[RMDB]
RNA sequence: GGGAACGACUCGAGUAGAGUCGAAAAGGUCAGGACAGCUCUUCCCGGCUUAAGGGUUGAGCCCAGGUGGCUUCCGGCUUACCGGACACGUCGUGUGGUGCCGAAGCUCUGACGAGAGGGGUGCGGAGUUUUAGUUUAAGUUCGCUUAAACUAAAACAAAAGAAACAACAACAACAAC
Reactivity to DMS in 0.01 (KOAc 150mM, MgCl2 10mM, bicine 150mM(pH8.5), 24C), signal-to-noise 7, nucleotides 027 to 126: g010g010u010c030a050g000g000a110c220a200g000c010u000c020u000u010c000c000c000g020g010c230u010u010a080a120g010g000g020u000u000g000a040g010c010c040c070a090g020g020u000g010g010c020u000u000c060c050g020g000c060u000u010a060c030c010g000g010a070c080a060c160g000u010c150g020u000g010u000g000g010u000g000c010c010g000a040a040g010c020u000c020u000g000a060c040g000a100g010a080g000g000g000g010u010g010c090g000g000a180
Reactivity to 2A3 in 0.01 (KOAc 150mM, MgCl2 10mM, bicine 150mM(pH8.5), 24C), signal-to-noise 4, nucleotides 027 to 126: g040g010u040c020a010g020g060a060c020a040g000c000u000c000u020u000c000c000c000g000g070c080u150u240a080a080g020g010g000u030u020g010a000g000c010c000c020a050g020g080u080g000g000c000u020u000c080c050g000g010c020u070u120a090c010c010g050g020a040c040a020c070g300u220c070g030u160g070u070g090g030u030g020c000c000g020a020a000g000c000u000c010u070g010a020c020g010a010g010a020g050g020g000g010u080g020c040g030g040a090